[RMDB]
RNA sequence: GGGAACGACUCGAGUAGAGUCGAAAAGACUGAUGUAGAGUUCGGUUGGAGCGACAAGUAUUUAGCUUGAGAUAGCUAAAUCACCUCGGUAUGAUUAGGGUGAGACCUAGGAACCGUAGGGGUAAUCAAUGCUGUAUUGCGUUCGCGCAAUACAGAAUCUACAGGAUAGGUUCGCCUAUCCUGUAGAAAAAGAAACAACAACAACAAC
Reactivity to DMS in 0.01 (KOAc 150mM, MgCl2 10mM, bicine 150mM(pH8.5), 24C), signal-to-noise 2, nucleotides 027 to 156: g010a130c030u000g000a070u010g020u010a100g000a110g010u000u000c010g000g010u000u000g010g000a080g010c030g040a070c050a020a060g010u000a020u000u010u000a010g010c010u000u000g010a240g020a120u000a020g000c000u000a010a010a040u000c030a040c010c000u000c010g010g000u010a100u020g010a280u000u010a040g000g010g010u010g020a300g030a140c010c000u010a090g010g010a120a060c030c020g020u000a040g020g010g010g010u000a050a110u000c090a040a090u000g020c000u000g000u010a020u000u000g000c000g040u010u010c300g030c010g030c000a030a020u010a000c000a010g000a030a080
Reactivity to 2A3 in 0.01 (KOAc 150mM, MgCl2 10mM, bicine 150mM(pH8.5), 24C), signal-to-noise 4, nucleotides 027 to 156: g020a000c060u050g030a030u130g060u120a050g020a040g070u060u050c040g020g020u030u040g040g020a050g030c060g090a100c030a060a020g040u090a070u000u010u000a000g010c000u010u020g010a010g010a040u120a020g010c000u000a000a010a010u020c020a010c010c010u030c010g000g020u300a230u210g030a040u020u050a020g000g000g040u040g100a060g040a030c000c000u010a020g000g030a030a020c020c000g000u030a050g010g010g010g000u040a030a030u110c130a020a110u160g030c000u000g000u010a000u000u000g010c010g020u020u010c200g000c000g000c100a000a000u000a000c000a000g000a000a020
Background
An RNA of 207 nucleotides, treated with DMS and 2A3 and read out base by base. It was measured as part of the RMDB library M2RFPK. The DMS profile rests on 4,759 reads.